An RNA of 177 nucleotides, treated with DMS and 2A3 and read out base by base.
2A3 adducts were read by reverse transcription with SuperScript II with manganese.
The reactions ran in a buffer of 150 mM KOAc, 10 mM MgCl2 and 150 mM bicine (pH 8.5), at 24 C.
[RMDB]
RNA sequence: GGGAACGACUCGAGUAGAGUCGAAAAGGUAGCCGGUUCAAAUCCGGUCAACUCAUCCUUGAAAGAUGAAAAAACGCAAAGACUGGCCUCACAGGUAGUACGAAAAUGGCUUAAUGCUUCAGUCCUUCGACAUGAGUUAAUUCGUUAACUCAUGUCGAAAAGAAACAACAACAACAAC
Reactivity to DMS in 0.01 (KOAc 150mM, MgCl2 10mM, bicine 150mM(pH8.5), 24C), signal-to-noise 1, nucleotides 027 to 126: g020g000u000a240g000c110c000g000g010u000u000c280a000a300a020u180c000c000g000g120u060c060a110a150c000u000c000a110u000c000c000u000u240g000a140a190a100g000a060u000g000a000a000a140a040a280a150c030g000c140a020a120a000g000a000c000u000g040g070c000c080u000c000a130c050a180g000g000u000a020g000u000a020c140g030a060a000a170a060u120g000g060c010u000u080a150a060u040g000c000u000u000c090a060g000u080c050c020u000u000
Reactivity to 2A3 in 0.01 (KOAc 150mM, MgCl2 10mM, bicine 150mM(pH8.5), 24C), signal-to-noise 3, nucleotides 027 to 126: g050g020u080a000g000c000c000g030g020u030u070c070a080a030a040u020c000c000g000g020u000c010a000a000c000u010c010a040u050c020c000u000u030g160a190a070a020g080a040u120g060a060a060a020a000a000a020c110g010c090a060a040a040g050a040c030u040g020g000c000c020u070c010a080c020a020g060g040u030a020g030u050a050c020g120a000a020a040a120u080g020g010c020u080u090a080a030u150g030c000u030u040c010a050g040u010c000c030u010u010